[RMDB]
RNA sequence: GGGAACGACUCGAGUAGAGUCGAAAAGAUAAAGGCAAUACAAAAACGCUUCACAGUUGGUGAAAUUGUGCCUUACGAAUAUCAAUGCGUUGCAUACGUUGAGAUCGCAAAGCGUUUAAGCCGUUAUGAACAUCCGUUUUUUGUUAAGGCGGCUGUACUGCCGUACUGAAUUCGUUCAGUACGGCAGAAAAGAAACAACAACAACAAC
Reactivity to DMS in 0.01 (KOAc 150mM, MgCl2 10mM, bicine 150mM(pH8.5), 24C), signal-to-noise 1, nucleotides 027 to 156: g090a160u000a020a070a120g020g050c010a030a190u020a270c150a050a070a050a060a080c020g040c030u010u010c050a040c020a100g000u010u000g070g070u000g000a110a030a070u000u000g050u000g040c070c010u000u000a040c040g010a010a080u000a300u000c010a020a030u000g020c020g020u000u010g020c120a170u010a010c020g030u010u020g010a110g000a270u000c010g030c070a020a060a020g010c020g000u000u000u000a110a210g010c030c000g000u000u000a090u020g010a050a040c040a060u000c070c090g000u000u000u000u000u000u010g010u000u010a100a050g020g000c020g020g040c030u010g010u000a090
Reactivity to 2A3 in 0.01 (KOAc 150mM, MgCl2 10mM, bicine 150mM(pH8.5), 24C), signal-to-noise 2, nucleotides 027 to 156: g050a010u180a040a080a040g020g000c030a150a000u090a170c080a020a200a010a010a010c000g000c010u060u090c030a040c010a060g030u060u160g120g070u150g090a050a110a130u070u050g030u030g050c000c000u010u050a060c050g030a090a010u120a000u200c020a050a000u110g000c020g050u030u120g150c090a080u220a160c000g010u010u020g040a040g000a070u020c030g000c090a030a020a050g000c000g000u020u070u060a020a030g010c020c010g000u020u040a060u140g120a050a000c010a060u080c010c040g010u020u000u000u000u040u050g080u020u060a060a040g020g000c000g020g020c010u010g030u030a080